[RMDB]
RNA sequence: GGGAACGACUCGAGUAGAGUCGAAAAUAUGUAUUUAGCUGAAGAUUAUUUUAGGAAACAUAAAAUCCGUUCUAACGCUAAUGUGAUAUAUGCAACGCCAAAAGAUGCUUUAUUUGACGUAGGAAAAGUUAGUGCCUAGGUUCGCCUAGGCACUAACAAAAGAAACAACAACAACAAC
Reactivity to DMS in 0.01 (KOAc 150mM, MgCl2 10mM, bicine 150mM(pH8.5), 24C), signal-to-noise 2, nucleotides 027 to 126: u000a030u010g000u030a100u080u000u000a010g000c000u000g000a300a050g010a020u020u000a030u050u030u000u020a130g040g000a060a040a070c060a140u030a090a070a050a120u000c040c050g070u030u000c010u000a000a220c300g020c000u020a020a020u010g000u020g000a040u000a010u010a010u010g010c100a030a030c100g060c050c020a040a020a040a140g000a020u010g030c130u030u020u000a100u000u050u010g000a050c110g040u030a090g020g000a030a040a160a130
Reactivity to 2A3 in 0.01 (KOAc 150mM, MgCl2 10mM, bicine 150mM(pH8.5), 24C), signal-to-noise 3, nucleotides 027 to 126: u170a020u060g170u020a050u020u070u040a020g000c010u020g040a110a000g000a060u070u030a130u110u280u010u070a020g030g000a080a130a060c110a070u140a050a080a000a100u000c010c000g000u000u000c000u000a040a060c110g000c000u000a000a050u060g080u020g150a000u000a010u030a010u120g010c080a070a030c030g030c040c050a000a050a020a020g090a050u170g020c090u080u170u100a170u030u160u100g040a060c080g040u080a100g090g040a060a180a010a000

Overview
Chemical mapping of a 177-nucleotide RNA with DMS and 2A3. The DMS profile rests on 2,129 reads. The 2A3 profile rests on 1,324 reads. The data come from the RNA Mapping Database (RMDB), library OK1LIB. DMS adducts were read by reverse transcription with MarathonRT. 2A3 adducts were read by reverse transcription with SuperScript II with manganese.